[RMDB]
RNA sequence: GGGAACGACUCGAGUAGAGUCGAAAAAUACCAAAAUCCUGUCUCAGCUAAGGAGCUUCAAGCAGAUUGGCCCGACAUGUCAUUUGAUGAAAGGAGACAUGUUGCGAUGAACUUGUAGUCCAGAUAACGUGUCCCAAGGAUUCGUCCUUGGGACACGAAAAGAAACAACAACAACAAC
Reactivity to 2A3 in 0.01 (KOAc 150mM, MgCl2 10mM, bicine 150mM(pH8.5), 24C), signal-to-noise 1, nucleotides 027 to 126: a030u130a010c000c000a040a000a020a130u000c010c050u040g010u000c100u100c170a060g050c000u060a280a000g030g000a000g000c000u040u030c050a060a060g000c090a030g000a130u000u000g000g140c030c160c000g000a010c000a090u000g050u010c000a090u000u190u000g300a300u120g080a180a000a000g060g000a060g000a020c000a000u000g000u010u080g000c100g000a080u100g040a000a000c080u000u000g000u030a000g000u000c170c130a000g030a190u110a200a000
Reactivity to DMS in 0.01 (KOAc 150mM, MgCl2 10mM, bicine 150mM(pH8.5), 24C), signal-to-noise 1, nucleotides 027 to 126: a110u180a080c000c130a050a070a110a270u040c000c000u020g000u020c050u000c080a170g000c050u030a150a050g050g000a050g040c040u030u000c000a100a030g040c000a040g000a110u040u010g000g040c000c240c100g000a000c000a000u010g000u000c000a060u040u000u000g000a180u020g080a180a130a300g010g000a030g000a060c000a000u000g000u000u000g000c090g000a100u000g000a100a010c000u000u000g000u080a010g010u060c000c080a100g000a010u090a170a000

An RNA of 177 nucleotides, treated with 2A3 and DMS and read out base by base. Reactivities are rounded to 0.1 and cut off at 0 and 3. For DMS, 849 sequencing reads were counted.